[RMDB]
RNA sequence: GGGAACGACUCGAGUAGAGUCGAAAAAUAGUAGGCCUAAAAGCAGCCAUCAAUUGAGAAAGCGUUAAAGCUCAACAAAUUCACCAACAUAAUCCCAAAAACUAAUAACAAACUCCUAGCCCAAUACCGGACUAAUCUAUUGAAACAUAGAAGCAAUGUUGUACAACAUGUUCGCAUGUUGUACAACAAAAGAAACAACAACAACAAC
Reactivity to 2A3 in 0.01 (KOAc 150mM, MgCl2 10mM, bicine 150mM(pH8.5), 24C), signal-to-noise 2, nucleotides 027 to 156: a010u130a020g120u040a050g000g040c010c010u040a080a090a020a000g060c060a020g010c040c010a060u070c030a110a140u070u090g040a080g020a040a080a010g030c040g030u060u060a120a100a020g000c000u000c040a020a070c000a080a150a030u030u050c070a050c060c010a030a060c030a030u130a060a120u070c010c000c000a010a100a030a020a060c080u050a060a110u090a130a030c050a100a100a010c030u010c020c010u000a000g020c000c000c000a010a010u050a010c020c020g040g020a020c010u060a020a070u020c000u000a040u010u090g070a010a030a020c020a030u050a030g010a000a000g060c020a000a110u090